[RMDB]
Structure probing data (2A3 and DMS) for a 177-nucleotide construct. The DMS profile rests on 4,527 reads. For 2A3 the reverse transcriptase was SuperScript II with manganese.
RNA sequence: GGGAACGACUCGAGUAGAGUCGAAAAGCUGCCUCUGACGUCCUUCUCCCCCGGAAACGGGGCCGAAGGGUGGUAAUGCGGGUCGCCUGGCGCUAGCACGGGUAUGCGUGGCGGUCGACCCUGGCCGAGCCGCUAUGAUAUUCGUAUCAUAGCGGCUAAAAGAAACAACAACAACAAC
Reactivity to 2A3 in 0.01 (KOAc 150mM, MgCl2 10mM, bicine 150mM(pH8.5), 24C), signal-to-noise 3, nucleotides 027 to 126: g030c010u040g050c010c000u060c080u110g050a030c000g020u000c010c000u000u000c010u070c000c020c000c010c010g000g000a020a010a000c020g000g010g000g020c020c020g000a000a010g010g000g010u020g010g020u130a130a050u190g060c070g010g000g010u000c010g010c020c020u050g060g040c000g010c040u050a070g070c070a030c190g170g020g040u140a040u130g040c030g010u020g080g140c010g010g010u040c020g000a020c000c000c000u010g050g000c040c030g010
Reactivity to DMS in 0.01 (KOAc 150mM, MgCl2 10mM, bicine 150mM(pH8.5), 24C), signal-to-noise 4, nucleotides 027 to 126: g020c050u000g010c020c020u000c100u000g010a140c050g000u000c000c010u010u000c010u010c300c000c000c000c000g010g000a070a080a190c010g000g010g000g050c040c070g000a010a020g000g010g020u000g010g010u010a060a080u000g020c110g000g010g010u000c030g020c040c010u000g010g010c010g010c040u000a180g000c060a100c100g010g010g020u000a090u010g010c010g020u000g000g010c060g000g010u010c010g000a040c010c010c010u010g000g030c010c060g000
Conditions: 150 mM KOAc, 10 mM MgCl2 and 150 mM bicine (pH 8.5), 24 C. It was measured as part of the RMDB library OK2TRN.